This 177-nucleotide RNA was probed chemically with 2A3 and DMS.
The reactions ran in a buffer of 150 mM KOAc, 10 mM MgCl2 and 150 mM bicine (pH 8.5), at 24 C.
As a SHAPE reagent, 2A3 marks flexible, mostly unpaired nucleotides at the ribose 2'-OH.
RNA sequence: GGGAACGACUCGAGUAGAGUCGAAAAAGCUCCUUACGAGGAGCAAUUACCCUGACCAGUGGUAAGAUAAGCAAAGGCUAGGGGUGACGACCUCUAAGUCUGCGGAUCGAACCCGGUCAGGGUGCAAUAUAUGCAUGCUGUUCGCAGCAUGCAUAUAAAAAGAAACAACAACAACAAC
Reactivity to 2A3 in 0.01 (KOAc 150mM, MgCl2 10mM, bicine 150mM(pH8.5), 24C), signal-to-noise 5, nucleotides 027 to 126: a000g000c000u020c010c000u030u020a080c270g110a030g000g000a010g000c000a000a000u020u040a010c000c000c000u000g000a000c000c010a070g030u130g280g020u020a030a010g000a000u020a040a020g010c020a160a110a160g010g000c000u000a010g020g030g000g010u020g110a110c140g180a060c000c000u000c000u040a090a020g010u000c010u010g000c000g020g010a010u010c000g010a020a050c000c000c000g000g000u000c000a000g000g000g000u000g000c000a030a000
Reactivity to DMS in 0.01 (KOAc 150mM, MgCl2 10mM, bicine 150mM(pH8.5), 24C), signal-to-noise 4, nucleotides 027 to 126: a090g000c000u000c010c000u000u010a090c140g020a040g030g010a000g030c010a010a020u030u020a030c010c010c000u000g010a010c010c000a110g030u060g010g000u000a040a300g000a000u000a020a080g010c000a040a140a080g010g000c000u010a040g000g000g020g010u000g000a160c300g000a120c010c000u000c000u000a040a030g010u000c000u000g000c100g020g020a010u000c010g000a270a050c000c000c010g000g000u000c000a010g000g000g010u000g000c220a070a090